Source: RMDB library RNAMAK, as collected in RNAgym. An RNA of 207 nucleotides, treated with 2A3 and DMS and read out base by base. For DMS the reverse transcriptase was MarathonRT.
RNA sequence: GGGAACGACUCGAGUAGAGUCGAAAACUUAGCUGUGUAUUCGUACACAGCUAAGAAAAAACCUUUGUGGACAUGCUUACCACAAUUCCCAUUGGGAAUAAGUGGGAGCAACAGCCACUCUGGUAAAAAGCCGCAGACUAUUCGUAGUCUGCGGCAACCAAUAGUACACGUUCGCGUGUACUAUUGGAAAAGAAACAACAACAACAAC
Reactivity to 2A3 in 0.01 (KOAc 150mM, MgCl2 10mM, bicine 150mM(pH8.5), 24C), signal-to-noise 5, nucleotides 027 to 156: c010u010u000a000g000c000u010g000u010g010u020a030u050u110c240g030u040a010c000a000c010a000g020c000u000a000a000g000a010a010a000a000a000a000c030c010u030u010u010g000u010g020g010a070c040a130u020g010c020u030u090a300c000c000a020c020a010a030u000u010c020c010c040a300u190u300g010g000g040a020a020u110a300a080g010u000g000g000g010a010g000c000a030a010c040a040g020c000c000a000c000u000c000u010g010g020u080a060a080a060a130a010g000c000c000g000c000a000g000a000c000u010a010u100u160c180g060u020a000g010u000c000u000g000c000g010g000c000a000a000
Reactivity to DMS in 0.01 (KOAc 150mM, MgCl2 10mM, bicine 150mM(pH8.5), 24C), signal-to-noise 2, nucleotides 027 to 156: c010u000u000a000g000c000u010g040u000g010u010a010u000u020c300g050u010a020c000a020c000a010g020c000u000a000a020g000a000a020a110a120a210a050c010c000u010u000u010g010u000g000g030a080c060a300u000g010c000u000u000a190c000c000a020c000a150a040u000u010c000c010c000a300u010u010g000g020g020a010a010u010a050a110g040u000g020g000g010a030g010c030a040a050c050a210g020c000c010a010c020u000c070u000g020g000u010a060a120a100a230a070g000c000c010g020c000a020g010a020c000u030a120u010u010c220g000u000a050g000u010c000u000g040c000g020g000c000a000a000